The data come from the RNA Mapping Database (RMDB), library M2RFOK. Structure probing data (DMS and 2A3) for a 207-nucleotide construct. Values cover nucleotides 27 to 156. The reactions ran in a buffer of 150 mM KOAc, 10 mM MgCl2 and 150 mM bicine (pH 8.5), at 24 C. The 2A3 profile rests on 3,564 reads.
RNA sequence: GGGAACGACUCGAGUAGAGUCGAAAACGCAAAGCUGCAGCGCGGCGCUCUGGAGGCCUUGCCCCGCGCACUGCUCUUUACAAGGCCCGACGUGAGGGCACUUCGCGGGCAGUGCUGCGGCCUCGUGAAACUGCCCCUAAGUUCGCUUAGGGGCAAACCAAAUGUAUGAAUUCGUUCAUACAUUUGGAAAAGAAACAACAACAACAAC
Reactivity to DMS in 0.01 (KOAc 150mM, MgCl2 10mM, bicine 150mM(pH8.5), 24C), signal-to-noise 2, nucleotides 027 to 156: c040g010c010a060a060a060g010c020u000g010c010a090g020c030g030c080g010g010c070g020c050u010c040u000g010g000a180g030g010c020c070u000u000g020c000c110c030c010g030c050g040c000a050c020u010g010c000u000c010u010u000u010a110c030a030a030g030g050c000c000c020g010a190c130g010u000g000a190g030g000g000c000a010c000u010u000c020g030c300g000g010g000c000a080g030u000g000c050u020g030c010g030g000c010c010u000c040g000u000g020a110a080a110c090u000g000c040c000c000c000u010a040a040g000u000u010c300g020c020u000u000a020g020g020g050g040c010a000a000a020
Reactivity to 2A3 in 0.01 (KOAc 150mM, MgCl2 10mM, bicine 150mM(pH8.5), 24C), signal-to-noise 4, nucleotides 027 to 156: c060g020c030a090a080a050g010c020u150g000c060a070g070c030g010c020g140g010c040g020c030u040c070u110g140g010a050g010g000c020c070u050u110g020c010c000c000c010g030c010g020c020a000c000u010g000c000u010c000u100u210u170a040c020a010a000g050g010c010c010c000g070a120c090g070u140g100a170g010g020g010c090a220c080u020u020c030g020c040g020g010g000c010a010g020u010g010c010u020g000c000g000g000c000c000u010c010g000u020g020a070a070a020c080u020g010c000c000c000c000u000a010a000g000u080u090c180g050c080u000u000a000g010g000g010g000c000a000a000a000